[RMDB]
RNA sequence: GGGAACGACUCGAGUAGAGUCGAAAAGAUGUGUAACUUAGGUCCUGACAUAUUUUUAAGUAUGUGCUACAGGUGUCCUAAGGAAAUAGUAAGCACUGUGAGCGCUCUUGUCUACAAUAAUAAAUUGGCCCCCCUCCGUUCGCGGAGGGGAAAAGAAACAACAACAACAAC
Reactivity to DMS in 0.01 (KOAc 150mM, MgCl2 10mM, bicine 150mM(pH8.5), 24C), signal-to-noise 3, nucleotides 027 to 129: g050a060u080g010u020g030u010a150a090c000u000u010a080g000g090u010c040c000u040g000a130c030a100u020a000u060u000u090u000u060a050a220g040u020a060u000g040u020g110c120u010a300c030a060g000g060u050g010u000c000c020u050a060a000g000g020a050a060a160u050a040g040u040a120a110g030c030a080c100u040g030u020g030a050g050c080g020c110u010c010u000u000g000u070c020u050a110c060a050a000u020a090a090u150a020a110a180u000u050g000g000c150c000
Reactivity to 2A3 in 0.01 (KOAc 150mM, MgCl2 10mM, bicine 150mM(pH8.5), 24C), signal-to-noise 3, nucleotides 027 to 129: g070a030u120g020u040g000u050a000a020c020u000u010a000g000g000u000c000c000u010g030a010c000a000u030a050u010u090u010u000u100a110a020g060u070a040u020g000u030g120c090u070a070c000a020g000g030u010g040u030c000c020u000a000a000g020g090a030a030a010u150a000g150u070a120a010g030c000a000c040u000g000u080g140a010g030c080g000c000u000c000u010u010g030u050c020u050a060c010a010a010u170a110a010u130a060a120a190u100u040g070g000c020c010
Overview:
This 170-nucleotide RNA was probed chemically with DMS and 2A3. The RNA was probed in 150 mM KOAc, 10 mM MgCl2 and 150 mM bicine (pH 8.5) at 24 C.